RNA sequence: GGGAACGACUCGAGUAGAGUCGAAAAGAUAUGGAGAUAACAGACAUGCUGGGUCGGAAACGACAUAGCAACAGCUGUGUCUCCUAAGUCAAACCAUACAUAAGAGGUUCGCCUCUUAUGUAUGGAAGGUUGAUUCACUGUUCGCAGUGAAUCAACCAAAAGAAACAACAACAACAAC
Reactivity to 2A3 in 0.01 (KOAc 150mM, MgCl2 10mM, bicine 150mM(pH8.5), 24C), signal-to-noise 1, nucleotides 027 to 126: g020a000u030a050u100g030g000a020g010a030u110a300a040c010a000g160a120c080a040u040g000c010u090g090g010g000u000c010g010g030a000a090a030c000g010a010c010a020u010a010g000c010a000a140c090a180g000c000u020g000u000g010u000c000u000c000c000u000a080a000g000u030c030a000a020a080c010c000a010u000a000c010a010u000a020a000g000a000g040g000u130u190c290g140c070c000u000c010u000u020a000u010g000u010a000u000g010g000a020a020
Reactivity to DMS in 0.01 (KOAc 150mM, MgCl2 10mM, bicine 150mM(pH8.5), 24C), signal-to-noise 1, nucleotides 027 to 126: g000a000u000a300u010g000g010a010g000a020u010a080a020c010a000g020a060c210a130u000g010c010u010g000g010g040u000c000g020g000a090a030a200c050g010a010c000a030u000a020g000c000a000a150c230a160g000c000u000g000u000g020u000c010u000c000c010u000a020a030g000u000c000a130a130a220c010c000a000u000a000c000a000u000a000a010g020a010g000g000u000u030c280g000c000c000u000c000u000u000a000u000g020u000a010u000g000g010a000a010

Chemical mapping of a 177-nucleotide RNA with 2A3 and DMS. For DMS, 944 sequencing reads were counted. The 2A3 profile rests on 2,578 reads. The RNA was probed in 150 mM KOAc, 10 mM MgCl2 and 150 mM bicine (pH 8.5) at 24 C.